This 207-nucleotide RNA was probed chemically with DMS and 2A3. It was measured as part of the RMDB library ARCHII.

RNA sequence: GGGAACGACUCGAGUAGAGUCGAAAAAGAGGCGAUCUCGUAAACACGCACUUAAAUAUAACUGGCAAAACUAACAGUUUUAACCAAAACGUAGCAUUAGCUGCCUAAUAAGCGCAGCGAGCUCUUCCUGACAUUGCCUAUGUGUCUGUGAAGAGCACAUAAGUUACCUCUUCGGAGGUAACUUAUGAAAAGAAACAACAACAACAAC
Reactivity to DMS in 0.01 (KOAc 150mM, MgCl2 10mM, bicine 150mM(pH8.5), 24C), signal-to-noise 3, nucleotides 027 to 156: a110g000a090g010g030c040g010a060u000c010u000c040g020u000a090a100a120c070a100c080g020c020a050c020u000u000a050a070a120u000a180u000a040a100c080u000g000g000c070a050a120a050a050c070u010a110a090c060a150g020u000u000u000u000a040a230c170c080a060a050a060a080c060g000u000a020g020c050a120u000u000a120g020c000u000g000c010c030u000a120a110u000a040a050g000c050g020c010a110g040c030g010a060g000c010u000c000u000u000c000c000u000g000a030c030a030u000u010g000c180c130u000a080u020g030u000g000u000c000u000g000u000g010a020a020g010a040g030c000a030
Reactivity to 2A3 in 0.01 (KOAc 150mM, MgCl2 10mM, bicine 150mM(pH8.5), 24C), signal-to-noise 8, nucleotides 027 to 156: a000g080a030g020g030c040g050a120u030c050u050c060g080u100a070a130a020c100a030c070g040c020a090c090u100u130a050a150a030u180a070u030a060a060c040u020g050g000c080a060a040a080a070c070u110a080a050c040a040g000u000u040u040u060a040a060c040c020a020a040a030a050c070g090u070a020g030c020a050u050u070a020g000c010u010g020c000c010u140a280a230u180a300a040g060c130g000c080a000g000c000g000a010g000c000u000c010u000u000c000c000u000g000a000c000a010u070u110g090c020c020u100a110u180g030u000g000u000c000u010g040u020g030a000a010g000a000g000c000a000
For DMS the reverse transcriptase was MarathonRT. The RNA was probed in 150 mM KOAc, 10 mM MgCl2 and 150 mM bicine (pH 8.5) at 24 C.